[RMDB]
RNA sequence: GGGAACGACUCGAGUAGAGUCGAAAAGAAAGAAACAGUUGGCUAGCCGAACGCACGAGGAUUAAAGCCAACCGUGCGAGUCGGAACGCACGACCGACAAGAAAAGCCCUACAAUCGUGCAAGAAAACCUACUAUGGCACUUCGGUGCCAUAGUAGGAAAAGAAACAACAACAACAAC
Reactivity to DMS in 0.01 (KOAc 150mM, MgCl2 10mM, bicine 150mM(pH8.5), 24C), signal-to-noise 3, nucleotides 027 to 126: g000a140a100a060g000a100a100a060c050a090g000u000u020g010g000c020u000a120g000c010c010g000a090a080c130g010c070a030c060g010a140g020g010a100u010u080a090a070a040g000c000c030a010a060c030c020g030u010g010c020g020a200g010u000c000g010g000a110a030c140g000c020a020c000g000a090c000c030g000a020c010a020a080g000a130a030a160a140g000c030c000c000u030a130c180a110a080u000c010g000u000g000c000a180a080g020a090a030a070a100
Reactivity to 2A3 in 0.01 (KOAc 150mM, MgCl2 10mM, bicine 150mM(pH8.5), 24C), signal-to-noise 3, nucleotides 027 to 126: g030a000a030a000g100a040a080a020c050a050g010u030u010g060g000c050u030a040g070c010c060g070a100a060c060g000c030a030c010g000a040g020g000a060u160u130a190a050a020g050c000c000a010a000c000c000g000u010g010c030g000a040g020u060c050g010g030a040a010c030g000c000a010c000g000a000c030c000g040a040c020a010a040g070a050a120a000a000g040c010c010c020u030a020c040a010a030u030c000g000u000g000c010a000a000g070a010a010a000a010
The data come from the RNA Mapping Database (RMDB), library OK1LIB. This 177-nucleotide RNA was probed chemically with DMS and 2A3. The reactions ran in a buffer of 150 mM KOAc, 10 mM MgCl2 and 150 mM bicine (pH 8.5), at 24 C. For 2A3 the reverse transcriptase was SuperScript II with manganese.